[RMDB]
RNA sequence: GGGAACGACUCGAGUAGAGUCGAAAAGGGGUCUAGACCCUGAAUCGCAGAUAUAUGAACUACGUCUGAAGCCUCCACGGACGCAUAUGUAGAUUCAUGGUCUAGACGGAGGCACCCAAAACAUGUUACUGCCUCCUUCGGGAGGCAGUAACAUGAAUCAAUGCGUCAUGUUCGCAUGACGCAUUGAAAAAGAAACAACAACAACAAC
Reactivity to DMS in 0.01 (KOAc 150mM, MgCl2 10mM, bicine 150mM(pH8.5), 24C), signal-to-noise 1, nucleotides 027 to 156: g000g010g020g010u000c030u000a030g010a070c030c000c010u010g000a010a010u010c020g000c260a100g000a180u000a040u020a130u010g000a080a100c070u010a300c010g000u000c000u000g010a010a180g000c010c000u000c000c000a300c050g000g010a000c000g000c000a010u010a050u000g020u000a050g020a010u000u000c020a020u020g030g000u020c010u000a010g000a000c080g010g010a040g000g060c000a110c020c020c010a030a020a110a170c000a010u010g010u000u000a040c020u010g040c030c000u010c000c000u010u040c180g050g130g010a060g000g030c000a010g000u000a000a020c000a000u000g000a140a150